RNA sequence: GGGAACGACUCGAGUAGAGUCGAAAAUAGCCAACCUAUCAGGUAAAGGAUUGGGGCCAACCAACUAAAGCUAAUACUGAAGAGCGUUACACCCGGUAUCGUUACACCCGGCAAAGUUAGUCCCGGAAGGAACUAUCAGUUUCGACUGAUAGUUCCUAAAAGAAACAACAACAACAAC
Reactivity to 2A3 in 0.01 (KOAc 150mM, MgCl2 10mM, bicine 150mM(pH8.5), 24C), signal-to-noise 2, nucleotides 027 to 126: u140a020g050c000c000a040a010c020c000u140a110u170c120a060g110g060u080a090a110a080g050g000a070u040u070g010g000g000g000c010c050a040a050c030c010a020a030c040u110a190a030a000g010c050u100a090a040u100a250c050u030g100a110a030g010a050g030c030g030u020u030a000c020a060c060c020c050g020g000u040a050u110c030g010u010u080a050c030a080c000c010c010g040g030c010a120a000a080g020u040u090a010g040u070c000c020c000g000g040a010
Reactivity to DMS in 0.01 (KOAc 150mM, MgCl2 10mM, bicine 150mM(pH8.5), 24C), signal-to-noise 2, nucleotides 027 to 126: u020a070g030c000c030a080a060c050c000u000a080u020c140a060g000g030u010a060a110a160g010g010a090u000u010g020g010g000g050c030c120a040a100c080c050a110a100c050u000a040a100a110g010c040u020a050a110u000a060c050u000g000a090a050g000a030g010c050g020u000u000a040c120a090c050c000c030g010g000u000a030u000c070g000u000u000a040c100a090c090c010c090g010g010c070a040a060a070g010u000u000a110g010u000c010c010c000g020g000a150